[RMDB]
The data come from the RNA Mapping Database (RMDB), library OK1LIB. This 177-nucleotide RNA was probed chemically with DMS and 2A3. For DMS the reverse transcriptase was MarathonRT.
RNA sequence: GGGAACGACUCGAGUAGAGUCGAAAAGGGAGAGAGGUCUCAUUAGUGUGUACACAUCUGCUCUAAGUAUGUGAGUGAGAGAAGACCUGUCUUGGUGGCUUCAGUUCAUUUACAAGACAAAGGCAGGCGAGGAGCUGGGAUUCGUCCCAGCUCCUCGAAAAGAAACAACAACAACAAC
Reactivity to DMS in 0.01 (KOAc 150mM, MgCl2 10mM, bicine 150mM(pH8.5), 24C), signal-to-noise 1, nucleotides 027 to 126: g000g020g010a030g010a030g000a060g000g000u010c000u000c100a040u000u020a020g020u010g010u010g040u000a040c090a130c150a150u000c020u000g000c000u000c030u020a000a300g030u000a070u020g000u030g000a040g030u100g000a010g000a230g000a080a000g000a140c000c040u030g040u010c090u040u010g000g070u050g010g000c000u000u000c090a110g050u040u030c060a000u000u000u020a030c150a080a080g000a040c020a000a090a130g000g000c000a000g010g000
Reactivity to 2A3 in 0.01 (KOAc 150mM, MgCl2 10mM, bicine 150mM(pH8.5), 24C), signal-to-noise 2, nucleotides 027 to 126: g060g000g010a040g000a000g000a000g000g030u030c000u010c040a080u070u260a150g050u050g020u040g000u190a030c080a000c000a130u070c030u070g000c010u000c020u150a040a120g070u080a080u100g050u000g030a010g000u050g000a070g000a000g000a100a000g050a130c000c030u090g060u070c090u100u150g090g020u100g090g030c000u060u010c040a150g040u040u010c030a040u010u000u120a030c010a090a090g100a020c000a020a060a000g000g020c000a000g030g000
For 2A3, 766 sequencing reads were counted.